[RMDB]
The data come from the RNA Mapping Database (RMDB), library OK3TST. Structure probing data (2A3 and DMS) for a 207-nucleotide construct. Values cover nucleotides 27 to 156. 2A3 is a SHAPE reagent: it acylates the 2'-hydroxyl of flexible nucleotides of all four kinds.

RNA sequence: GGGAACGACUCGAGUAGAGUCGAAAAACAGCUGUUACACCUAAGUGAUCAUAACUCCGUCUGGAACACCUUUAUAGGUUGUUCGUAUAAUGGUAUGCGUCAUUGGUGCCUCAAGGUUUCCAUUUAACUAUUCUUCAGGUGGGAAGUUUAGAAUGUCCUAUCGAUUGGUUUUCGAACCAAUCGAUAGAAAAGAAACAACAACAACAAC
Reactivity to 2A3 in 0.01 (KOAc 150mM, MgCl2 10mM, bicine 150mM(pH8.5), 24C), signal-to-noise 5, nucleotides 027 to 156: a000c030a030g080c050u110g060u140u120a060c040a060c000c050u090a200a060g030u020g050a040u060c040a060u040a180a130c070u010c080c040g090u080c110u150g050g010a010a000c000a010c020c000u120u240u150a290u240a130g000g030u120u150g010u020u050c010g010u070a060u070a140a100u100g010g010u010a020u030g010c050g040u010c010a020u040u080g030g000u020g000c000c010u110c060a050a070g050g000u020u040u020c000c000a040u070u060u020a070a060c020u020a030u030u080c010u030u050c030a020g150g040u060g050g130g020a010a010g010u010u030u030a060g020a160a120u190g050u100c010
Reactivity to DMS in 0.01 (KOAc 150mM, MgCl2 10mM, bicine 150mM(pH8.5), 24C), signal-to-noise 2, nucleotides 027 to 156: a080c080a060g020c000u000g030u000u000a160c040a050c020c030u000a110a110g030u010g000a080u000c030a070u010a060a100c050u000c020c020g030u000c030u000g020g000a030a010c000a010c000c000u000u020u020a210u010a030g040g020u000u000g030u010u000c030g040u020a080u000a030a030u000g000g010u000a030u000g020c150g030u000c040a080u000u000g000g020u000g030c010c080u000c050a060a100g070g000u010u000u020c020c030a130u000u000u000a080a140c050u000a040u000u010c020u000u010c020a070g020g020u000g030g030g010a060a040g020u000u000u000a040g020a030a050u000g000u010c040